[RMDB]
RNA sequence: GGGAACGACUCGAGUAGAGUCGAAAAGAAAGGGCUGCACUAAAAUAACAUAGAUGAGAUAUUUCGCAUGAUAAUCUGUUGAUCUGGACACACUCUCCCUCUCGGGGCCAGAGAAAAAUCACAGCUUGUUAAUGGAUAAGUUCGCUUAUCCAUUAACAAAAGAAACAACAACAACAAC
Reactivity to 2A3 in 0.01 (KOAc 150mM, MgCl2 10mM, bicine 150mM(pH8.5), 24C), signal-to-noise 8, nucleotides 027 to 126: g040a030a040a000g040g010g000c020u030g020c020a020c070u120a030a060a070a140u170a100a030c050a040u110a040g100a100u120g060a060g030a070u060a100u100u140u070c040g020c050a030u100g040a040u120a120a060u070c030u040g050u070u080g060a020u020c010u020g040g000a010c020a000c000a020c100u020c000u000c010c000c000u020c020u040c060g020g000g000g010c020c020a000g000a000g030a040a160a010a000a000u090c070a030c010a050g030c020u020u020
Reactivity to DMS in 0.01 (KOAc 150mM, MgCl2 10mM, bicine 150mM(pH8.5), 24C), signal-to-noise 4, nucleotides 027 to 126: g010a060a100a140g010g020g000c010u010g000c030a080c060u020a050a070a070a100u030a070a110c070a080u010a080g030a070u010g000a100g000a090u000a090u000u020u010c080g010c100a040u000g000a070u000a060a050u010c030u000g010u000u000g000a050u000c020u010g000g000a060c080a060c110a090c030u010c030u010c020c020c030u000c060u000c090g000g000g010g000c040c050a030g000a050g020a020a050a040a100a050u010c060a030c070a060g010c200u010u000